[RMDB]
Chemical mapping of a 177-nucleotide RNA with DMS.
For DMS, 645 sequencing reads were counted.
Values cover nucleotides 27 to 126.
RNA sequence: GGGAACGACUCGAGUAGAGUCGAAAAGGCCCGUGAGCUGCAGCGGUUACAAGAAAGUAUUCCCGUCAUACUCACUGCGCUGGGGCUAGAACCAGAAAUCGCGCAGCGCACACCUCGGCAGCUUUCACUAAUGGCAGGCAUUCGUGCCUGCCAUUAGAAAAGAAACAACAACAACAAC
Reactivity to DMS in 0.01 (KOAc 150mM, MgCl2 10mM, bicine 150mM(pH8.5), 24C), signal-to-noise 1, nucleotides 027 to 126: g030g010c030c040c000g000u000g010a030g040c010u000g030c050a070g030c300g030g030u000u000a090c170a110a080g010a110a060a050g020u000a140u000u000c060c050c060g020u000c180a080u010a020c030u000c050a210c030u000g000c080g050c010u010g000g000g030g050c030u010a070g030a150a040c080c080a040g020a040a080a050u000c140g020c030g030c000a000g030c050g010c100a080c090a030c040c010u020c040g000g050c050a010g000c020u000u000u030c010a170
DMS adducts were read by reverse transcription with MarathonRT.